[RMDB]
RNA sequence: GGGAACGACUCGAGUAGAGUCGAAAAGUGAGCAGGUCAGUGUCCACAACUCCGCCGACCAGCUCGGCCGGCGGGUCACGAAGCAGCCGCUGCAAAUGCACACAACCCAGGUAGUGCCCAGUGGGCGGCUGUACCCAAAGUUCGCUUUGGGUACAGCAAAAGAAACAACAACAACAAC
Reactivity to 2A3 in 0.01 (KOAc 150mM, MgCl2 10mM, bicine 150mM(pH8.5), 24C), signal-to-noise 2, nucleotides 027 to 126: g010u030g020a040g000c030a030g010g100u150c020a030g050u010g030u050c020c040a050c000a130a070c060u010c030c000g030c000c000g010a020c000c000a110g170c100u120c150g000g020c020c010g010g010c000g000g000g040u050c040a020c080g050a080a010g020c030a020g010c030c000g020c030u000g020c000a090a120a060u120g000c020a010c000a010c000a030a120c020c000c000a000g130g020u090a080g110u060g040c060c000c050a130g160u250g020g010g050c000g030
Reactivity to DMS in 0.01 (KOAc 150mM, MgCl2 10mM, bicine 150mM(pH8.5), 24C), signal-to-noise 2, nucleotides 027 to 126: g000u000g030a110g020c010a060g000g010u000c090a030g010u010g010u000c030c050a110c190a140a070c110u000c000c000g000c010c000g020a020c000c000a160g020c230u020c150g010g020c010c020g000g010c010g000g000g000u000c130a130c120g030a060a160g010c080a090g000c040c000g000c070u000g000c090a060a080a110u000g010c000a130c000a030c030a060a080c000c040c030a150g000g000u010a060g020u000g000c000c050c020a150g000u000g000g000g020c000g000
An RNA of 177 nucleotides, treated with 2A3 and DMS and read out base by base. DMS adducts were read by reverse transcription with MarathonRT. The RNA was probed in 150 mM KOAc, 10 mM MgCl2 and 150 mM bicine (pH 8.5) at 24 C. The 2A3 profile rests on 1,668 reads.